Overview:
Chemical mapping of a 207-nucleotide RNA with 2A3. For 2A3, 1,431 sequencing reads were counted.
RNA sequence: GGGAACGACUCGAGUAGAGUCGAAAAAGCCAUACCAUUACGAUGGUAUGGCAAGUCCGUGACGGCGAUGGAUCCCGCCUGGCCGAUGCCGAACUGCCGAUCUGGCUGAUGGUUCCUGCCUCGUCAAAAAACGUAAAGCACUUCGGUGCUUUACGAACCCUACACAAGGCUUCGGCCUUGUGUAGGGAAAAGAAACAACAACAACAAC
Reactivity to 2A3 in 0.01 (KOAc 150mM, MgCl2 10mM, bicine 150mM(pH8.5), 24C), signal-to-noise 2, nucleotides 027 to 156: a000g000c010c000a000u000a000c000c010a010u050u020a040c220g090a030u010g020g000u000a000u010g000g010c010a000a000g020u020c020c030g060u070g010a040c020g030g000c040g070a100u080g020g000a030u050c000c000c010g050c010c020u030g060g000c010c030g050a030u180g080c030c020g120a160a120c070u160g020c030c010g050a090u060c060u130g020g000c010u050g080a130u070g000g000u020u000c020c010u050g030c060c000u040c040g030u000c010a030a050a020a050a030a050c000g000u000a000a000a000g000c000a010c020u010u070c140g070g030u000g010c000u010u000u000a000c010g000a000a000

The RNA was probed in 150 mM KOAc, 10 mM MgCl2 and 150 mM bicine (pH 8.5) at 24 C. It was measured as part of the RMDB library M2RFPK.